[RMDB]
RNA sequence: GGGAACGACUCGAGUAGAGUCGAAAACUGGGGCCAUUGGAAUGUUUUCAAAGGACAUGCAAUGCGGGUAUCUCUUCAUGGAUUGUGGGAGAAUAUUUGUAAAUUUGAUGUAAUCCAACGCCUUAAUUUCUACAAAACACAAAGCAAAUGCAAAUAACCCAUAGCUAAUCUUCGGAUUAGCUAUGGGAAAAGAAACAACAACAACAAC
Reactivity to 2A3 in 0.01 (KOAc 150mM, MgCl2 10mM, bicine 150mM(pH8.5), 24C), signal-to-noise 1, nucleotides 027 to 156: c000u000g030g000g000g000c000c000a010u010u010g000g010a250a060u060g020u000u030u090u070c030a130a020a020g030g000a000c000a010u060g090c000a050a070u070g010c060g000g020g070u090a050u030c040u000c000u180u040c030a070u140g170g060a140u140u150g000u040g020g030g000a010g010a060a000u040a030u060u030u030g020u080a000a040a240u060u000u060g000a050u020g010u020a020a000u000c020c020a050a000c060g020c000c000u030u050a050a060u060u100u030c000u050a120c030a050a150a040a000c070a000c020a010a030a020g070c010a040a030a130u100g040c000a080a170a000u030a020a090